[RMDB]
RNA sequence: GGGAACGACUCGAGUAGAGUCGAAAACUUUUGGCUCUGUGGAUUCUAAAGGGAACUAUCAAGGCUAUGAUGUAGUCAUCGCUAAACGCAUGGCUCUUGAUUUAUUGGGCGAUGAAAAUAAAAUAGACCUGGUAGUAGGAUUCGUCCUACUACCAGGAAAAGAAACAACAACAACAAC
Reactivity to 2A3 in 0.01 (KOAc 150mM, MgCl2 10mM, bicine 150mM(pH8.5), 24C), signal-to-noise 2, nucleotides 027 to 126: c000u060u020u040u040g030g000c010u020c020u010g160u140g110g000a090u100u040c020u160a110a080a050g010g040g000a040a010c000u010a020u090c020a050a010g030g000c000u000a010u070g080a120u140g090u120a010g060u060c030a070u020c050g000c040u020a090a120a140c090g000c040a030u010g000g000c010u000c000u080u000g050a070u060u180u180a150u100u150g110g040g000c020g020a040u020g040a020a060a000a060u180a010a020a020a040u100a070g060a040
Reactivity to DMS in 0.01 (KOAc 150mM, MgCl2 10mM, bicine 150mM(pH8.5), 24C), signal-to-noise 2, nucleotides 027 to 126: c060u000u020u020u010g010g000c180u000c020u000g020u020g000g000a090u000u010c050u000a010a050a110g020g020g010a120a130c100u000a020u000c030a010a080g000g020c010u000a010u000g000a100u000g040u000a060g020u000c090a010u000c050g010c040u000a050a070a060c120g010c040a010u000g010g020c000u010c020u000u000g010a060u000u000u000a120u020u000g020g020g020c030g020a060u000g010a100a080a050a050u000a050a050a090a130u000a150g000a200
An RNA of 177 nucleotides, treated with 2A3 and DMS and read out base by base. The reactions ran in a buffer of 150 mM KOAc, 10 mM MgCl2 and 150 mM bicine (pH 8.5), at 24 C.